[RMDB]
RNA sequence: GGGAACGACUCGAGUAGAGUCGAAAAUAGAGUGUAAAGGUAAAAGCCAGCUUGACUGCGAGAGCUACAACUCGAGCAGGUAGGAAACUAGGACUUAGUGAUCCGGUGGUACCGCAUGGAAGGGCCAUCGCUCAACGGAUAAAAGCUACCCUGGGGAGACAUUUAAAGAGUUCGCUCUUUAAAUGUCAAAAGAAACAACAACAACAAC
Reactivity to DMS in 0.01 (KOAc 150mM, MgCl2 10mM, bicine 150mM(pH8.5), 24C), signal-to-noise 1, nucleotides 027 to 156: u000a150g030a110g080u000g020u000a080a090a040g020g030u000a000a100a070a080g020c040c000a090g020c020u010u020g010a050c030u010g000c030g000a300g030a030g010c020u030a050c140a080a070c020u000c020g020a300g000c000a070g000g000u000a070g010g000a100a050a100c010u000a040g040g020a070c110u000u000a070g000u010g020a040u000c030c000g030g040u020g010g010u000a050c020c000g000c110a200u000g040g010a110a120g030g020g000c010c000a000u000c050g020c030u010c000a090a210c110g000g000a240u020a040a060a110a000g000c040u000a000c020c000c020u000g000g020g020g030a240
Reactivity to 2A3 in 0.01 (KOAc 150mM, MgCl2 10mM, bicine 150mM(pH8.5), 24C), signal-to-noise 3, nucleotides 027 to 156: u140a000g060a040g010u100g020u050a090a140a020g010g020u090a090a110a110a000g030c000c010a020g040c010u090u060g080a070c020u050g010c010g000a040g000a010g040c000u170a070c060a120a070c020u010c000g020a010g000c040a020g030g030u020a010g000g070a090a030a070c040u030a030g040g040a050c030u080u090a030g020u030g060a080u030c010c030g010g000u000g030g050u220a300c010c010g030c140a110u140g050g100a070a120g020g000g000c010c000a010u020c020g000c040u020c070a050a050c070g030g020a020u080a100a070a020a030g010c010u030a050c000c010c010u000g010g000g000g010a030